[RMDB]
RNA sequence: GGGAACGACUCGAGUAGAGUCGAAAACGGAAUAGCGGCGAUUCAGGCCAGCGAAACGAGGAUCAUUAUAAUAAGCCUCCACCGUUACGACCCUGCGGAAUGGAAGCGCUUUAGGGAAUAACGCCGCGCGGGCCUCGUUUACCGACGUAACCGACGGAGACAGAGUUGAUUUCGAUCAACUCUGUCUAAAAGAAACAACAACAACAAC
Reactivity to 2A3 in 0.01 (KOAc 150mM, MgCl2 10mM, bicine 150mM(pH8.5), 24C), signal-to-noise 3, nucleotides 027 to 156: c020g020g030a070a050u050a090g040c010g000g000c020g040a030u060u040c030a030g080g010c030c030a010g010c000g050a050a030a020c030g010a030g000g000a040u100c080a070u120u220a080u140a300a010u060a090a020g020c000c000u000c010c000a030c000c030g010u020u060a070c040g110a100c000c000c020u040g000c020g060g010a230a180u180g040g030a130a050g040c030g000c140u090u060u140a080g030g000g030a000a070u060a070a050c020g020c040c010g030c020g000c030g000g050g000c000c010u010c010g010u030u000u020a060c000c020g030a080c010g080u010a090a030c030c000g040a020c040g080g030
Reactivity to DMS in 0.01 (KOAc 150mM, MgCl2 10mM, bicine 150mM(pH8.5), 24C), signal-to-noise 2, nucleotides 027 to 156: c030g070g020a180a110u010a140g000c010g010g010c000g020a190u010u010c000a140g030g060c030c000a050g000c000g020a020a120a090c020g000a110g020g000a110u000c090a070u000u050a130u000a140a130u020a060a050g030c000c000u000c000c030a090c030c000g030u000u000a080c050g010a220c040c020c030u010g000c000g020g010a230a050u040g020g010a090a140g020c040g000c060u000u020u000a100g020g020g020a290a110u000a040a030c030g000c010c040g020c030g010c050g000g010g000c010c000u020c010g010u000u000u000a110c020c000g040a080c070g020u010a140a220c000c000g010a140c090g000g000
Chemical mapping of a 207-nucleotide RNA with 2A3 and DMS. It was measured as part of the RMDB library OK3TST. Conditions: 150 mM KOAc, 10 mM MgCl2 and 150 mM bicine (pH 8.5), 24 C.